Chemical mapping of a 177-nucleotide RNA with DMS and 2A3. For 2A3, 4,677 sequencing reads were counted. For DMS the reverse transcriptase was MarathonRT. Reactivities are given for positions 27 through 126.
[RMDB]
RNA sequence: GGGAACGACUCGAGUAGAGUCGAAAAAUACAAUUAAAAAUGCCAUUCUUUGACAAAAAUGAAAGUGGUCAAUUAAUGAGUCGAUUAACUGACGAUACGAAAGUGAUAAAUGAAUUUAUUUCACAAACAUUCGAUACACAUUCGUGUGUAUCGAAUGAAAAGAAACAACAACAACAAC
Reactivity to DMS in 0.01 (KOAc 150mM, MgCl2 10mM, bicine 150mM(pH8.5), 24C), signal-to-noise 3, nucleotides 027 to 126: a040u030a050c080a070a050u030u020a030a050a110a070a040u030g000c030c010a050u000u000c020u000u000u000g000a040c120a030a040a070a110a080u010g000a060a090a070g000u050g020g010u000c040a000a050u010u010a010a030u010g000a110g000u020c100g020a120u030u000a000a040c090u000g000a060c080g010a080u050a030c120g000a040a060a090g000u000g010a030u040a030a080a140u020g000a050a060u000u000u000a050u020u020u000c020a000c170a040a070a170
Reactivity to 2A3 in 0.01 (KOAc 150mM, MgCl2 10mM, bicine 150mM(pH8.5), 24C), signal-to-noise 5, nucleotides 027 to 126: a000u300a010c070a040a090u200u250a090a070a020a000a050u100g050c020c010a010u030u040c020u030u030u030g060a090c090a060a130a040a120a190u210g060a180a060a080g240u130g060g000u070c020a020a060u040u060a040a030u060g030a050g100u060c070g050a100u070u120a070a040c050u070g050a030c080g090a080u030a110c060g090a030a110a020g020u010g040a060u070a090a090a090u140g060a080a030u110u140u100a110u020u110u060c050a020c040a040a090a000